[RMDB]
RNA sequence: GGGAACGACUCGAGUAGAGUCGAAAAGGGAAACCAUUCGUGUCAGUGGCAGUCAAGAAACAUAUUGUUAGUGCAUGGCCGAACGCAUCCCGAAUAAGCUGGACUAUCGGGGAUGGAAUCCCAUACAUGGAGGACAUCCUUUCGAGGAUGUCCUCCAAAAAGAAACAACAACAACAAC
Reactivity to DMS in 0.01 (KOAc 150mM, MgCl2 10mM, bicine 150mM(pH8.5), 24C), signal-to-noise 1, nucleotides 027 to 126: g000g000g010a030a000a230c000c000a280u000u000c000g000u050g000u000c070a050g020u110g070g020c000a050g000u000c080a080a060g000a120a150a220c250a020u150a060u000u000g000u000u000a120g010u020g040c020a110u030g000g000c000c000g000a080a020c090g000c120a000u010c000c000c000g000a120a030u000a110a000g000c000u030g000g000a150c000u000a140u160c000g000g020g030g000a190u040g000g000a000a300u000c000c000c000a040u010a000c270a060
Reactivity to 2A3 in 0.01 (KOAc 150mM, MgCl2 10mM, bicine 150mM(pH8.5), 24C), signal-to-noise 1, nucleotides 027 to 126: g000g000g030a040a040a040c080c000a070u140u240c120g090u190g080u300c050a110g300u050g080g050c000a000g030u160c040a160a000g250a110a050a000c000a000u250a190u040u190g070u090u110a000g010u000g020c040a050u000g000g000c000c000g000a090a000c000g000c040a000u020c000c000c000g000a100a090u070a000a040g060c020u000g030g130a070c000u000a140u040c040g020g000g020g020a000u090g000g070a190a000u050c000c000c000a000u110a000c090a000